[RMDB]
RNA sequence: GGGAACGACUCGAGUAGAGUCGAAAAAGUGCUCCUCAUCCUGGUCCUCGUGUUCGUAGGUCUCAACCUCGACAACAGGACCACGAUCUCGUUCGGCGUGUACACCCUGGAGGAUGUACGGGUGGCCAACCACUCUCCUAUUCGUAGGAGAGUGGUUAAAAGAAACAACAACAACAAC
Reactivity to 2A3 in 0.01 (KOAc 150mM, MgCl2 10mM, bicine 150mM(pH8.5), 24C), signal-to-noise 4, nucleotides 027 to 126: a000g080u050g020c020u020c010c000u020c010a030u020c000c020u030g000g000u010c010c000u060c100g010u020g040u160u090c070g120u300a010g010g000u030c080u000c200a140a200c000c010u000c010g010a010c010a100a020c010a020g000g000a000c000c000a000c000g000a010u030c050u020c070g100u150u070c070g050g030c040g030u110g040u070a060c010a020c010c010c000u050g080g010a080g030g020a080u070g040u070a020c030g030g000g020u040g060g030c000c000
Reactivity to DMS in 0.01 (KOAc 150mM, MgCl2 10mM, bicine 150mM(pH8.5), 24C), signal-to-noise 6, nucleotides 027 to 126: a100g020u000g000c030u000c010c020u000c040a090u000c010c060u000g010g020u000c000c000u000c220g010u000g000u010u000c010g020u020a020g010g010u010c260u010c300a110a140c000c000u010c010g000a010c010a080a090c140a030g010g000a010c010c010a000c210g010a020u000c070u000c090g010u000u010c090g010g010c030g020u000g030u010a190c030a030c010c010c010u000g010g020a070g010g000a040u000g000u000a030c070g020g010g020u000g010g020c050c050
About this RNA:
Source: RMDB library OK2TRN, as collected in RNAgym. The record gives the reactivity of an RNA of 177 nucleotides to 2A3 and DMS.